[RMDB]
RNA sequence: GGGAACGACUCGAGUAGAGUCGAAAAUGUUAGUCUGACCUAUCGAAAGGGAAUGUAGUUAAGAUUCUACAACUGGGAUGCAGAUUUUCAGCGGUAACGCAUAUGAACUUGGUGACAUUGGCAUGGGCUAGAUAUGCUUCUUCGGAAGCAUAUCUAGAAAAGAAACAACAACAACAAC
Reactivity to 2A3 in 0.01 (KOAc 150mM, MgCl2 10mM, bicine 150mM(pH8.5), 24C), signal-to-noise 3, nucleotides 027 to 126: u040g010u020u030a020g030u000c030u010g120a070c020c000u050a060u140c120g120a150a040a040g050g030g050a090a130u080g000u010a030g010u030u100a140a090g030a190u150u000c010u030a030c000a070a040c080u060g000g040g000a020u050g040c030a000g030a050u090u050u010u040c020a020g000c000g020g040u040a060a010c020g000c010a020u050a060u190g060a050a050c040u050u060g080g000u040g030a030c020a080u030u090g020g020c010a030u040g050g000g020
Reactivity to DMS in 0.01 (KOAc 150mM, MgCl2 10mM, bicine 150mM(pH8.5), 24C), signal-to-noise 4, nucleotides 027 to 126: u020g020u010u000a050g020u000c030u010g000a160c070c020u000a060u010c120g010a110a120a110g000g010g010a080a110u000g010u000a030g000u000u010a100a150g000a170u000u000c010u000a020c040a060a170c050u000g010g010g000a070u000g010c040a050g000a070u000u000u000u000c060a070g020c030g010g000u020a070a110c090g030c010a090u000a070u010g000a050a040c110u000u000g030g010u000g000a060c040a060u000u010g000g000c050a050u000g010g010g020